Chemical mapping of a 207-nucleotide RNA with 2A3. For 2A3, 827 sequencing reads were counted. Values cover nucleotides 27 to 156. The data come from the RNA Mapping Database (RMDB), library RNAMAK.
RNA sequence: GGGAACGACUCGAGUAGAGUCGAAAAAGAUAUUUCGAUAUCUCCACGGGGGUCGUGUGAUGGGAGGUCGAUAAGUAUCUGAAGCCUCCACGGAUACUUUUGACGACCGAAGAACAACACACGACGGAGGCACCCUACUAUAAUGAUUCGUCAUUAAUCCACUUGUAUUCUUCGGAAUACAAGUGGAAAAAGAAACAACAACAACAAC
Reactivity to 2A3 in 0.01 (KOAc 150mM, MgCl2 10mM, bicine 150mM(pH8.5), 24C), signal-to-noise 2, nucleotides 027 to 156: a000g120a020u130a040u090u170u060c070g020a010u030a210u050c010u000c040c030a070c040g000g000g010g000g000u000c000g000u010g000u000g040a060u040g000g010g000a000g000g010u000c000g020a050u060a240a020g010u030a000u020c020u010g030a060a000g020c010c000u000c030c010a030c000g000g000a010u010a010c000u040u080u100u300g220a150c070g010a010c000c000g010a090a000g000a010a000c000a010a010c010a000c000a000c000g010a000c000g010g000a010g000g020c000a030c010c000c000u060a130c060u060a050u050a080a080u020g070a050u070u100c140g180u050c070a040u300u300a200a070